Chemical mapping of a 207-nucleotide RNA with 2A3 and DMS. It was measured as part of the RMDB library OK3TST. The 2A3 profile rests on 2,854 reads.
[RMDB]
RNA sequence: GGGAACGACUCGAGUAGAGUCGAAAAAUAGGAGAGGGGCUAUGAACUACCUCUGCUAUGGAUCUUAUUCAAAGUCAGCUACCUCCUAGAUACUAUCUGUAGAACCUAAAUGUAAUAUUCAGCAUAGCAGGGAUGAACAUGGUAAAUGAAAGGUAUCCCUUUAAUCUUGUUUCGACAAGAUUAAAGGAAAAGAAACAACAACAACAAC
Reactivity to 2A3 in 0.01 (KOAc 150mM, MgCl2 10mM, bicine 150mM(pH8.5), 24C), signal-to-noise 5, nucleotides 027 to 156: a000u060a010g020g040a060g010a030g030g080g000g000c020u070a080u170g060a050a050c030u110a120c050c000u000c000u020g000c000u020a010u020g060g010a080u030c060u080u190a120u150u140c080a130a100a050g050u020c010a010g040c020u050a150c000c020u000c020c010u010a020g020a050u030a050c030u030a050u140c080u110g040u050a040g040a080a050c010c020u030a120a100a050u070g010u040a040a040u080a080u210u160c050a040g030c000a060u020a010g000c010a010g030g000g010a030u080g050a020a020c050a060u060g030g020u130a110a140a070u120g020a030a010a030g070g010u090a050u100c010
Reactivity to DMS in 0.01 (KOAc 150mM, MgCl2 10mM, bicine 150mM(pH8.5), 24C), signal-to-noise 2, nucleotides 027 to 156: a090u020a060g000g000a090g010a150g000g000g020g020c020u000a140u030g020a050a200c030u010a100c010c020u010c000u000g010c010u010a050u000g030g000a110u000c050u000u000a080u000u010c030a110a120a120g020u000c040a100g020c060u000a060c040c000u000c010c000u000a050g030a120u010a090c060u010a070u000c070u000g020u010a060g000a100a100c050c020u000a060a100a100u010g010u000a050a080u000a090u000u000c020a090g000c060a030u000a040g000c020a070g000g010g000a050u010g000a070a190c050a070u010g040g050u000a060a070a050u010g010a070a050a060g000g010u000a110u000c050